[RMDB]
RNA sequence: GGGAACGACUCGAGUAGAGUCGAAAAGAUAUGGAAUCGAUCCGGAGGCCACAGUCGGAAACGACUGAAUGGCCUGGAGUCGAUUCCUAAGUCAAAACUGAGAAAAUUCUUCGGAAUUUUCUCAGAAGUAUAUUUGUGUGUUCGCACACAAAUAUACAAAAGAAACAACAACAACAAC
Reactivity to DMS in 0.01 (KOAc 150mM, MgCl2 10mM, bicine 150mM(pH8.5), 24C), signal-to-noise 2, nucleotides 027 to 126: g000a030u000a300u010g010g000a020a000u000c000g030a050u000c000c000g000g010a070g030g020c000c000a050c000a010g020u000c000g020g020a080a050a130c000g000a020c000u000g010a110a110u000g010g010c000c010u000g000g000a020g010u010c000g000a020u000u000c000c000u000a010a080g000u000c010a080a110a170a220c020u020g000a020g010a040a020a010a000u000u000c000u010u010c220g020g010a000a000u000u000u000u000c000u000c000a000g000a050a100
Reactivity to 2A3 in 0.01 (KOAc 150mM, MgCl2 10mM, bicine 150mM(pH8.5), 24C), signal-to-noise 1, nucleotides 027 to 126: g030a000u070a040u110g000g000a000a000u030c020g020a010u090c060c120g240g280a070g070g080c000c000a000c020a010g020u010c000g010g040a050a010a000c000g010a020c010u000g070a100a210u050g010g000c070c000u020g000g000a000g260u060c000g000a010u010u000c000c020u000a010a010g020u020c020a020a010a110a220c030u020g010a020g020a000a060a010a000u000u010c020u080u070c300g040g030a000a010u010u000u070u000c000u020c020a020g010a010a000
The record gives the reactivity of an RNA of 177 nucleotides to DMS and 2A3. For DMS, 1,380 sequencing reads were counted. The RNA was probed in 150 mM KOAc, 10 mM MgCl2 and 150 mM bicine (pH 8.5) at 24 C. DMS adducts were read by reverse transcription with MarathonRT. High 2A3 reactivity points to a flexible backbone, as in loops and unpaired stretches.